[RMDB]
RNA sequence: GGGAACGACUCGAGUAGAGUCGAAAAGAUAUGGAGUUAACGUGGAAUCCCAUCGAUCGAAGUCGGAAACGACUUCGGGAGGGACCACGUUAACUCCUAAGUCAAAAGGUUUUCUUCGGAAAACCAAGAUGGUAUUACAGUUCGCUGUAAUACCAUCAAAAGAAACAACAACAACAAC
Reactivity to DMS in 0.01 (KOAc 150mM, MgCl2 10mM, bicine 150mM(pH8.5), 24C), signal-to-noise 7, nucleotides 027 to 126: g010a030u010a300u000g000g000a010g010u010u000a000a000c010g030u000g000g000a210a160u000c010c000c010a300u000c250g000a070u010c010g010a010a010g020u000c000g010g000a120a120a240c010g000a010c000u000u000c010g010g010g010a050g010g000g000a060c000c000a000c010g000u000u000a010a010c010u000c000c000u000a010a060g010u010c030a110a100a140a140g010g010u000u000u000u000c000u000u010c240g020g000a010a000a010a010c000c020a050a080
Reactivity to 2A3 in 0.01 (KOAc 150mM, MgCl2 10mM, bicine 150mM(pH8.5), 24C), signal-to-noise 4, nucleotides 027 to 126: g050a030u080a060u180g000g000a010g000u010u010a000a010c010g020u020g020g050a220a160u080c000c000c030a170u300c040g040a020u040c000g010a000a000g000u000c000g000g060a040a070a110c010g010a000c000u010u000c000g000g000g000a030g000g000g000a010c000c000a000c010g000u000u000a000a010c000u000c000c010u010a000a000g000u010c010a010a000a000a050g000g000u000u010u000u030c020u030u130c300g200g010a020a000a000a010c000c010a000a020